[RMDB]
RNA sequence: GGGAACGACUCGAGUAGAGUCGAAAAGUUUUGAACUGGCAAAGCAUUCGUAGCAGGCACCGGUUGUCCAUUAGCUAUUAUUACGUUAGGAAACUGUUGGUAUGGAGCUUGAUUUUGCGGAUGCUGCGGCGCUGGCGGCACGAUUGCACCAAAUGGGGUCCUGAGUUAUUUUCGAAUAACUCAGGACAAAAGAAACAACAACAACAAC
Reactivity to DMS in 0.01 (KOAc 150mM, MgCl2 10mM, bicine 150mM(pH8.5), 24C), signal-to-noise 1, nucleotides 027 to 156: g020u000u010u010u010g030a100a040c000u000g090g040c000a150a150a120g020c030a140u000u000c010g050u000a120g050c020a010g030g000c060a090c010c000g010g000u010u020g020u010c010c020a070u020u020a060g050c040u000a090u000u000a130u010u010a090c130g060u000u010a100g040g010a140a040a050c030u000g020u010u010g020g000u000a130u010g030g040a090g020c040u010u010g020a160u000u000u030u010g030c000g050g020a070u000g020c010u000g010c060g000g030c000g060c060u000g020g050c050g010g000c030a080c040g010a160u000u010g070c060a080c040c030a070a100a100u000g000g000g010
Reactivity to 2A3 in 0.01 (KOAc 150mM, MgCl2 10mM, bicine 150mM(pH8.5), 24C), signal-to-noise 1, nucleotides 027 to 156: g010u010u030u060u090g050a040a000c030u040g070g030c040a000a080a000g000c000a000u000u040c020g070u090a020g010c020a010g010g000c070a000c020c030g020g040u050u050g150u030c000c060a060u120u000a000g020c020u050a060u220u010a080u090u150a260c080g050u010u120a020g000g080a060a030a120c030u020g070u130u130g070g000u180a090u120g040g000a050g030c000u070u000g040a110u070u100u160u090g020c010g000g000a000u000g000c020u010g000c000g000g000c010g010c000u020g060g020c020g000g080c000a000c110g040a040u000u110g000c000a030c080c000a050a080a300u080g000g010g000
Structure probing data (DMS and 2A3) for a 207-nucleotide construct.